RNA sequence: GGGAACGACUCGAGUAGAGUCGAAAAUAAAUGAGCGUACAGCACACUCAGACUGUACGCUAUCUGAGUGUGUCAUCUUCAAAGUCCAACGACACACACAAGGCGUUGGAACAAGAGUGUGAGAAAAUAUAGGUACCAACUUCGGUUGGUACCUAUAAAAAGAAACAACAACAACAAC
Reactivity to 2A3 in 0.01 (KOAc 150mM, MgCl2 10mM, bicine 150mM(pH8.5), 24C), signal-to-noise 1, nucleotides 027 to 126: u160a000a140a070u110g030a040g040c070g040u060a030c030a030g030c030a010c000a010c030u010c010a010g040a120c040u050g030u050a000c050g090c000u000a010u000c030u010g050a000g000u040g010u000g050u030c030a060u020c000u200u060c080a070a060a010g060u000c000c010a050a020c030g060a020c000a010c000a000c000a030c060a220a000g080g040c020g020u010u010g000g020a030a050c020a060a070g060a000g020u020g020u020g030a060g050a010a130a120a010
Reactivity to DMS in 0.01 (KOAc 150mM, MgCl2 10mM, bicine 150mM(pH8.5), 24C), signal-to-noise 2, nucleotides 027 to 126: u060a060a090a150u000g010a010g050c010g000u000a020c040a050g000c020a090c030a010c020u020c010a120g020a080c020u000g000u010a030c050g010c020u000a000u000c050u000g000a140g010u000g030u000g000u000c060a120u030c150u020u000c170a060a150a140g000u000c030c000a060a060c050g000a080c000a100c060a020c150a110c190a150a070g010g010c050g030u000u000g000g000a110a070c120a010a110g000a060g030u000g010u000g000a120g000a110a100a060a110